[RMDB]
RNA sequence: GGGAACGACUCGAGUAGAGUCGAAAAGAUAUGGACCACUCUACUCAUCCGGUAAGACUCGGAAACGAGUGCCAGGAUAGUAGAGGUGGUCCUAAGUCAAACUAGAUCCUCUUCGGAGGAUCUAGAACAGUUCCUCUACGUUCGCGUAGAGGAACUGAAAAGAAACAACAACAACAAC
Reactivity to DMS in 0.01 (KOAc 150mM, MgCl2 10mM, bicine 150mM(pH8.5), 24C), signal-to-noise 2, nucleotides 027 to 126: g000a050u000a300u000g000g000a030c010c000a050c000u000c000u020a000c000u000c220a020u010c000c000g020g000u000a060a050g010a110c020u000c000g010g010a120a060a140c000g010a000g040u000g020c030c010a100g050g000a000u000a040g000u000a010g020a010g040g030u000g000g000u000c000c000u000a000a080g020u000c060a060a090a300c010u000a000g000a000u000c010c000u010c010u000u000c200g000g000a020g000g000a000u000c000u000a000g000a040a160
Reactivity to 2A3 in 0.01 (KOAc 150mM, MgCl2 10mM, bicine 150mM(pH8.5), 24C), signal-to-noise 1, nucleotides 027 to 126: g020a020u100a050u220g000g020a000c000c000a010c000u000c000u000a020c000u050c090a020u030c000c000g000g000u110a190a080g220a240c000u000c010g020g050a060a070a070c040g010a000g010u050g040c000c020a040g000g000a010u010a020g010u000a000g000a030g020g000u020g000g020u000c000c000u000a030a010g000u000c010a090a020a050c000u000a000g000a020u020c000c000u030c000u010u090c280g160g000a000g000g000a040u000c000u000a000g000a000a010

Source: RMDB library TTRDEL, as collected in RNAgym. Chemical mapping of a 177-nucleotide RNA with DMS and 2A3. High 2A3 reactivity points to a flexible backbone, as in loops and unpaired stretches. For 2A3 the reverse transcriptase was SuperScript II with manganese. The reactions ran in a buffer of 150 mM KOAc, 10 mM MgCl2 and 150 mM bicine (pH 8.5), at 24 C.